[RMDB]
RNA sequence: GGGAACGACUCGAGUAGAGUCGAAAACGCCCGUCGGUCCGGGGCGUGGUGAUGAACCCGGUCGACCACCCGCACGGCGGUGGUGAGGGUAAGACCUCCGGCGGCCGUCACCCGGUUAGCCCGUGGGCCACCUUUAACUUUUCGAAGUUAAAGGUGGAAAAGAAACAACAACAACAAC
Reactivity to DMS in 0.01 (KOAc 150mM, MgCl2 10mM, bicine 150mM(pH8.5), 24C), signal-to-noise 6, nucleotides 027 to 126: c150g030c190c010c020g020u000c060g020g010u000c010c010g020g000g010g010c040g030u000g020g020u000g010a060u000g000a120a110c030c010c010g010g010u000c080g000a060c010c020a030c020c010c050g010c110a090c100g000g010c100g010g010u010g000g020u010g010a040g000g010g010u000a120a170g010a300c020c000u000c010c050g010g010c040g000g010c110c000g010u000c040a090c020c010c040g010g000u000u010a090g020c070c000c010g030u010g010g010g000
Reactivity to 2A3 in 0.01 (KOAc 150mM, MgCl2 10mM, bicine 150mM(pH8.5), 24C), signal-to-noise 4, nucleotides 027 to 126: c020g040c020c010c000g050u040c030g030g020u040c020c010g010g020g020g030c090g040u080g040g170u160g060a130u090g040a060a060c010c010c000g000g010u040c020g050a030c000c000a010c010c030c020g100c040a120c090g120g020c060g020g030u020g010g020u050g010a030g000g000g020u050a060a020g050a120c000c000u020c020c000g050g010c000g020g000c010c000g030u020c010a060c000c010c010g020g000u040u070a050g090c000c000c020g030u070g010g030g040
Structure probing data (DMS and 2A3) for a 177-nucleotide construct. The reactions ran in a buffer of 150 mM KOAc, 10 mM MgCl2 and 150 mM bicine (pH 8.5), at 24 C. For DMS, 9,439 sequencing reads were counted. It was measured as part of the RMDB library OK2TRN.